Structure probing data (2A3 and DMS) for a 177-nucleotide construct.
DMS adducts were read by reverse transcription with MarathonRT.
Values are in units of 0.01, from 0 to 300, in steps of 10.
Source: RMDB libraries RFM100 and RFMREP, as collected in RNAgym.
The RNA was probed in 150 mM KOAc, 10 mM MgCl2 and 150 mM bicine (pH 8.5) at 24 C.
RNA sequence: GGGAACGACUCGAGUAGAGUCGAAAAGAAGUUUUCCCUAUCGCGGGGACGGCGGAGUCAGUGCCGUCGCUCCUCGCGGUAGUUCUAUCGAAAGCCAGGAGGGCGGGCGCCACGGACGGCGCAUUAAUUACAGGUCAUAUUUCGAUAUGACCUGUAAAAAAGAAACAACAACAACAAC
Reactivity to 2A3 in 0.01 (KOAc 150mM, MgCl2 10mM, bicine 150mM(pH8.5), 24C), signal-to-noise 3, nucleotides 027 to 126: g160a080a030g020u020u010u050u080c010c000c000u000a000u000c000g000c000g000g000g000g000a010c010g010g000c010g070g010a010g070u300c240a050g100u210g300c020c000g000u020c000g000c040u000c000c010u000c000g000c000g000g000u000a000g000u010u050c070u070a160u090c080g090a110a040a020g000c010c000a070g050g080a080g080g130g000c020g010g000g000c030g010c010c000a030c070g250g050a020c060g000g020c010g000c000a030u040u110a030a010
Reactivity to DMS in 0.01 (KOAc 150mM, MgCl2 10mM, bicine 150mM(pH8.5), 24C), signal-to-noise 5, nucleotides 027 to 126: g010a070a160g010u010u010u000u000c010c020c000u000a000u000c010g010c010g000g000g010g000a020c020g000g010c000g000g010a040g000u030c250a210g040u040g020c000c000g000u010c000g000c170u000c000c010u000c020g010c000g000g010u010a000g000u010u020c040u010a110u020c100g000a090a140a110g010c020c040a110g010g000a100g020g020g010c020g010g020g020c030g000c010c020a080c110g010g020a080c170g000g010c010g010c030a020u000u020a040a090
Background:
In probing experiments dimethyl sulfate is read out at A N1 and C N3, which are open when not base-paired.